[RMDB]
RNA sequence: GGGAACGACUCGAGUAGAGUCGAAAAAUUUGUCGCGUGGCUGAACGGCGCUUUCAAAGAGUCCGGUUCGGUCGUCGUGGCCCACUAUACCGGUCUCACCGUUGCGCAGAUGAGCGAUCUUCGCUCAACUGCUAUGGGCAUUCGUGCCCAUAGCAGUAAAAGAAACAACAACAACAAC
Reactivity to 2A3 in 0.01 (KOAc 150mM, MgCl2 10mM, bicine 150mM(pH8.5), 24C), signal-to-noise 5, nucleotides 027 to 126: a000u170u140u190g090u050c030g000c020g030u050g040g010c020u030g030a030a020c000g020g020c070g020c020u020u130u090c150a140a130a040g020a010g020u020c000c020g060g020u040u060c030g000g000u010c010g020u030c030g020u130g020g010c000c040c000a050c030u150a110u080a140c000c010g040g000u000c010u010c040a030c010c020g080u090u110g020c050g000c030a030g060a200u080g010a010g000c010g030a090u120c100u180u110c040g000c000u010c000a010
Reactivity to DMS in 0.01 (KOAc 150mM, MgCl2 10mM, bicine 150mM(pH8.5), 24C), signal-to-noise 6, nucleotides 027 to 126: a100u000u000u000g020u000c030g020c030g030u000g010g010c030u000g000a040a060c030g000g000c130g000c050u000u000u000c190a100a110a130g000a020g010u000c030c020g010g000u000u000c110g020g020u000c010g020u010c160g010u000g010g010c020c050c100a080c210u000a090u010a080c050c020g000g000u000c030u010c040a080c120c080g000u000u000g000c070g010c060a090g010a110u000g000a020g010c000g010a120u010c210u000u010c020g010c000u000c010a060

Overview:
Chemical mapping of a 177-nucleotide RNA with 2A3 and DMS. The reactions ran in a buffer of 150 mM KOAc, 10 mM MgCl2 and 150 mM bicine (pH 8.5), at 24 C. In probing experiments dimethyl sulfate is read out at A N1 and C N3, which are open when not base-paired. For DMS the reverse transcriptase was MarathonRT.